This 177-nucleotide RNA was probed chemically with 2A3 and DMS. The data come from the RNA Mapping Database (RMDB), library OK2TRN. 2A3 adducts were read by reverse transcription with SuperScript II with manganese. For DMS the reverse transcriptase was MarathonRT. The RNA was probed in 150 mM KOAc, 10 mM MgCl2 and 150 mM bicine (pH 8.5) at 24 C.

RNA sequence: GGGAACGACUCGAGUAGAGUCGAAAAACACAAAAGCUGAUUUGCUCUCUGCGCCGAAAAGGGCUGGAUGUAACAGCGGAACGAAGGGAAUCCGCCAUGAAUAGCGUCAUGUUCCGCAUCCUCAUCGAGCCAUCUAAGGAUUCGUCCUUAGAUGGCUAAAAGAAACAACAACAACAAC
Reactivity to 2A3 in 0.01 (KOAc 150mM, MgCl2 10mM, bicine 150mM(pH8.5), 24C), signal-to-noise 2, nucleotides 027 to 126: a000c050a000c040a030a060a100a000g020c030u070g050a280u090u110u240g030c000u000c010u040c060u050g050c060g080c020c010g060a090a090a070a000g090g000g030c070u050g040g000a030u030g010u030a050a020c030a090g000c000g000g000a030a060c070g030a090a100g170g010g030a050a130u040c000c030g080c030c000a100u170g130a170a070u140a100g050c020g020u070c050a040u110g000u060u030c010c000g000c010a010u000c000c020u030c000a080u090c060g010
Reactivity to DMS in 0.01 (KOAc 150mM, MgCl2 10mM, bicine 150mM(pH8.5), 24C), signal-to-noise 3, nucleotides 027 to 126: a110c080a070c130a050a070a100a080g010c040u010g000a110u010u000u000g020c010u000c040u000c040u000g000c100g020c030c020g000a030a040a050a090g020g020g010c030u000g020g010a040u020g000u000a090a070c160a140g000c000g000g000a040a020c000g000a160a110g020g000g010a120a060u010c100c030g000c030c040a060u000g040a060a080u010a120g010c040g010u000c040a050u000g000u000u000c020c000g020c050a070u000c030c040u000c100a050u010c120g010